Structure probing data (2A3) for a 207-nucleotide construct. The reactions ran in a buffer of 150 mM KOAc, 10 mM MgCl2 and 150 mM bicine (pH 8.5), at 24 C.
RNA sequence: GGGAACGACUCGAGUAGAGUCGAAAAAGUGCACUAGGUACGCCUAGUGCACAUUCCAGGACAUACUGCUGAGGAUGUCAAAAAUGCAGGUGGAGUCCUCAACUGGAUAGGCUACGGCCUAUCCAGAAAAAGACUUGGUUGUUCGCAACCAAGUCAAGGUAAUACACAGCUUCGGCUGUGUAUUACCAAAAGAAACAACAACAACAAC
Reactivity to 2A3 in 0.01 (KOAc 150mM, MgCl2 10mM, bicine 150mM(pH8.5), 24C), signal-to-noise 1, nucleotides 027 to 156: a000g010u000g010c000a000c000u000a000g010g010u080a050c300g070c000c000u000a000g000u000g000c000a000c010a000u000u000c000c000a010g020g020a010c020a040u130a130c000u020g010c020u060g010a090g180g020a130u190g130u300c100a050a210a020a040a020u170g020c060a010g040g020u020g050g130a130g020u000c010c010u050c040a040a090c000u000g020g000a000u000a000g000g000c000u030a020c180g010g000c020c000u040a000u000c000c000a000g010a000a000a000a000a000g000a000c010u010u010g000g010u000u010g020u020u070c290g040c120a000a000c000c000a000a000g010u000c000a000a030